Description: Chemical mapping of a 177-nucleotide RNA with DMS. The reactions ran in a buffer of 150 mM KOAc, 10 mM MgCl2 and 150 mM bicine (pH 8.5), at 24 C. For DMS, 771 sequencing reads were counted. Source: RMDB library OK2TST, as collected in RNAgym.
[RMDB]
RNA sequence: GGGAACGACUCGAGUAGAGUCGAAAAUUUGGACUUACUUAAGAGCCCGUUCAUCACCAUCGGGUUGAUGCGCUCCUCUUGCACAUGAAAGUAACUGGGAAGGCGCAAAUUUUUGAGCGCUUUGUCGAUAGCCCUUAGUGUUCGCACUAAGGGCUAUAAAAGAAACAACAACAACAAC
Reactivity to DMS in 0.01 (KOAc 150mM, MgCl2 10mM, bicine 150mM(pH8.5), 24C), signal-to-noise 1, nucleotides 027 to 126: u010u010u000g020g010a020c060u000u000a010c090u010u010a150a150g000a030g000c050c020c100g020u000u000c010a110u010c070a160c100c020a130u000c190g010g010g040u040u010g000a010u000g010c070g010c010u000c100c040u000c060u010u010g050c060a030c090a130u020g000a100a120a090g020u000a040a030c180u000g000g020g020a010a040g000g010c000g010c000a060a040a100u000u000u000u000u000g000a300g010c000g000c000u010u010u000g000u000c030g000